The record gives the reactivity of an RNA of 207 nucleotides to DMS and 2A3. For 2A3, 645 sequencing reads were counted. The reactions ran in a buffer of 150 mM KOAc, 10 mM MgCl2 and 150 mM bicine (pH 8.5), at 24 C.
RNA sequence: GGGAACGACUCGAGUAGAGUCGAAAAGUUAUAUCCAGGAAAUCUUGUUACAAAAUACCCAAUACAGAUAUUUGUGUUUGGUAUGUGCCAGAACUUGGAGAUCAACGCGAUUUGACAGCAUAUUUUCCUGAAGAUAUUGCGCAUGGCAAGCAAUUAGAAACACUAGAGACUUCGGUCUCUAGUGUUUAAAAGAAACAACAACAACAAC
Reactivity to DMS in 0.01 (KOAc 150mM, MgCl2 10mM, bicine 150mM(pH8.5), 24C), signal-to-noise 2, nucleotides 027 to 156: g010u010u010a070u010a160u000c010c000a060g010g020a080a040a070u000c090u000u020g010u000u020a160c040a160a120a150a050u000a020c030c020c000a030a050u000a020c020a040g030a260u040a110u000u010u000g020u010g010u000u000u000g030g030u000a010u010g010u000g020c010c020a060g020a090a080c040u010u000g020g010a140g020a090u000c020a040a030c040g010c040g020a140u000u020u000g020a260c020a090g000c020a030u000a120u010u000u000u000c010c010u000g000a040a180g010a120u010a040u000u000g020c030g000c040a140u000g000g030c040a080a170g020c060a080a120u010u000a230g020
Reactivity to 2A3 in 0.01 (KOAc 150mM, MgCl2 10mM, bicine 150mM(pH8.5), 24C), signal-to-noise 2, nucleotides 027 to 156: g010u070u000a030u000a010u080c000c000a020g000g030a000a100a010u030c040u020u020g060u180u120a090c010a020a240a000a000u010a010c000c000c000a000a000u020a000c000a000g110a140u120a200u300u300u140g000u000g000u000u000u040g000g010u000a000u010g010u070g020c000c010a010g000a100a050c030u010u010g010g000a030g000a030u060c030a070a000c050g010c030g160a090u080u000u080g030a020c020a020g040c010a010u030a110u140u060u060u060c000c040u070g010a010a050g000a070u070a010u070u090g000c040g000c050a040u110g030g090c030a060a000g000c010a020a050u260u270a130g050